[RMDB]
RNA sequence: GGGAACGACUCGAGUAGAGUCGAAAAUGAUCUCGGUGGCGGCGCCGAUAACGAUGUCGACGCCGGGCUGGAUGUCCGGGUUGCCGGCCUUGCCGAUGGCGGCGAUGCGGCCGUUCUUGAGCGCGAGGCAACGAGAGUAUUUCGAUACUCUCGUUGCAAAAGAAACAACAACAACAAC
Reactivity to DMS in 0.01 (KOAc 150mM, MgCl2 10mM, bicine 150mM(pH8.5), 24C), signal-to-noise 3, nucleotides 027 to 126: u020g000a060u000c000u020c010g020g020u010g000g010c010g000g000c030g050c030c000g010a090u040a100a140c190g010a120u010g010u000c010g000a040c010g010c000c010g010g000g010c060u010g010g000a060u010g010u030c000c020g020g000g010u000u020g000c010c010g010g030c000c010u010u000g030c020c040g020a140u020g000g000c020g010g000c000g000a050u010g020c090g010g000c010c010g020u000u010c010u010u000g000a200g010c070g000c070g010a080g010
Reactivity to 2A3 in 0.01 (KOAc 150mM, MgCl2 10mM, bicine 150mM(pH8.5), 24C), signal-to-noise 3, nucleotides 027 to 126: u120g030a070u010c030u020c060g060g000u030g050g070c020g020g000c000g030c020c000g010a020u110a140a110c090g080a080u190g010u020c010g010a030c000g020c010c000g000g020g000c010u060g030g070a090u100g050u010c000c000g000g010g020u070u090g030c000c020g080g030c000c000u080u100g030c040c030g120a120u140g020g000c000g000g010c010g000a020u130g070c020g040g010c000c000g020u070u010c020u070u090g030a050g000c060g020c030g030a040g070
The data come from the RNA Mapping Database (RMDB), libraries RFM100 and RFMREP. This 177-nucleotide RNA was probed chemically with DMS and 2A3. In probing experiments dimethyl sulfate is read out at A N1 and C N3, which are open when not base-paired.